Structure probing data (2A3) for a 177-nucleotide construct. The reactions ran in a buffer of 150 mM KOAc, 10 mM MgCl2 and 150 mM bicine (pH 8.5), at 24 C. For 2A3, 856 sequencing reads were counted. It was measured as part of the RMDB library OK1LIB.

RNA sequence: GGGAACGACUCGAGUAGAGUCGAAAAUGACCGCCGCAGCGAAGGUGGACUUCUCCCUCGACAGCUCGGCGCGGGCGAUGGAGCGCAGGUGCACCUCGUCGGGACCGUCGAAGAUGCGCAUGGCGCGGGAUGCAAGGGGGUUCGCCCCCUUGCAUCCAAAAGAAACAACAACAACAAC
Reactivity to 2A3 in 0.01 (KOAc 150mM, MgCl2 10mM, bicine 150mM(pH8.5), 24C), signal-to-noise 2, nucleotides 027 to 126: u170g050a000c000c010g020c040c010g070c090a120g130c020g120a110a000g070g040u060g000g010a020c030u110u050c000u000c010c000c000u010c030g000a000c000a020g020c020u000c000g000g020c000g000c040g020g040g000c060g030a130u250g120g110a110g000c050g000c070a010g200g060u170g000c000a260c050c000u020c000g000u000c000g000g000g090a220c070c040g000u000c000g070a070a040g080a200u100g020c010g000c100a130u100g100g000c000g000c030g000